[RMDB]
RNA sequence: GGGAACGACUCGAGUAGAGUCGAAAAGAUAUGGACGAGAACUACAGCUUUUGACGCACGGGUUUCGGAAACGAAAUUGUGCGAUAAGCUGCUCGUCCUAAGUCAAAUCUACGCUUCGGCGUAGAAAGAGUAGGUAACUCUUCGGAGUUACCUACUCAAAAGAAACAACAACAACAAC
Reactivity to DMS in 0.01 (KOAc 150mM, MgCl2 10mM, bicine 150mM(pH8.5), 24C), signal-to-noise 2, nucleotides 027 to 126: g000a060u000a300u000g000g000a000c000g020a010g000a120a080c150u030a300c000a010g000c010u000u010u000u000g020a220c100g010c000a010c000g030g020g000u000u000u000c000g000g020a060a110a220c000g010a010a000a020u000u030g030u000g000c010g010a110u030a010a040g020c000u000g050c000u000c020g000u000c000c000u020a010a050g000u000c100a120a150a200u000c010u000a000c000g000c010u050u000c210g000g000c000g000u000a010g010a030a060a140
Reactivity to 2A3 in 0.01 (KOAc 150mM, MgCl2 10mM, bicine 150mM(pH8.5), 24C), signal-to-noise 3, nucleotides 027 to 126: g060a010u060a030u150g000g010a000c040g030a000g020a140a070c160u270a100c280a020g050c020u180u140u290u300g300a180c030g060c010a000c040g270g000g000u030u030u000c020g000g030a040a010a040c010g020a000a000a030u080u070g020u000g000c010g080a060u010a120a010g020c000u000g000c010u000c000g010u000c000c000u000a040a000g010u000c000a000a020a160u000c000u020a000c020g040c010u070u080c300g200g000c000g000u010a000g060a020a070a010